[RMDB]
RNA sequence: GGGAACGACUCGAGUAGAGUCGAAAAAGUUGUGCUGCUUCAGUUUGCCAGAUCUGUCAAGAAGGUAAAUGGGAAUGGUAGCACAUAAUAAGAGAAUGUUUACCUUGGACUUCUUAGAAAGGUGGAUGAGAAAUUUUUCAUACUGUUCUAUGGCAAAGUAGGUGAGUAGUUUCGACUACUCACCUACAAAAGAAACAACAACAACAAC
Reactivity to 2A3 in 0.01 (KOAc 150mM, MgCl2 10mM, bicine 150mM(pH8.5), 24C), signal-to-noise 1, nucleotides 027 to 156: a000g080u040u020g000u000g000c010u000g000c000u060u030c010a040g040u010u000u000g010c000c050a090g010a290u020c040u070g190u150c130a070a020g040a090a070g010g000u020a050a000a000u080g010g050g110a080a170u060g010g000u050a000g000c000a000c000a010u050a010a050u160a050a050g140a000g010a160a060u080g000u030u060u060a100c000c000u010u010g010g010a020c000u110u020c010u100u090a000g070a050a000a010g060g020u020g010g070a050u080g030a010g020a050a180a130u070u200u000u050u000c010a030u080a270c020u020g040u090u000c030u020a030u300g010g040c040a010a000a060
The data come from the RNA Mapping Database (RMDB), library OK3TST. Structure probing data (2A3) for a 207-nucleotide construct. The RNA was probed in 150 mM KOAc, 10 mM MgCl2 and 150 mM bicine (pH 8.5) at 24 C. Values cover nucleotides 27 to 156.